The record gives the reactivity of an RNA of 177 nucleotides to DMS and 2A3. The DMS profile rests on 1,449 reads. Values cover nucleotides 27 to 126.
RNA sequence: GGGAACGACUCGAGUAGAGUCGAAAAGGCUGACGUUACCUAUACUGCGUUCGUCAGCCGGGAUAUCAACGCAGUAUAGGUAAGAUAUCCCACGACGGUGGACAUGCGAAAGCAUGUCCAUCGUCGAGGUCGUACAUGGCUUCGGCCAUGUACGACCAAAAGAAACAACAACAACAAC
Reactivity to DMS in 0.01 (KOAc 150mM, MgCl2 10mM, bicine 150mM(pH8.5), 24C), signal-to-noise 1, nucleotides 027 to 126: g000g020c030u050g000a130c150g000u010u000a000c010c000u000a090u000a000c000u010g000c000g010u000u000c110g050u000c040a140g000c090c100g000g000g000a040u010a040u040c130a000a030c000g000c000a070g010u000a010u020a000g000g000u000a060a060g000a040u020a060u000c000c000c050a160c020g070a000c000g000g100u010g020g000a010c000a000u000g010c050g000a120a220a170g000c010a000u000g000u040c000c000a000u000c000g060u000c000g060a030
Reactivity to 2A3 in 0.01 (KOAc 150mM, MgCl2 10mM, bicine 150mM(pH8.5), 24C), signal-to-noise 1, nucleotides 027 to 126: g070g000c050u040g030a000c050g030u020u050a030c000c000u000a000u000a010c000u010g010c000g030u010u060c110g040u030c070a040g040c010c000g000g020g000a030u030a020u060c030a000a000c010g000c000a010g010u000a000u000a000g030g000u000a000a000g010a030u070a020u070c010c000c010a030c010g000a000c000g000g000u000g000g000a000c010a000u000g030c000g080a090a000a000g020c000a000u000g000u000c000c000a010u000c000g010u000c000g000a000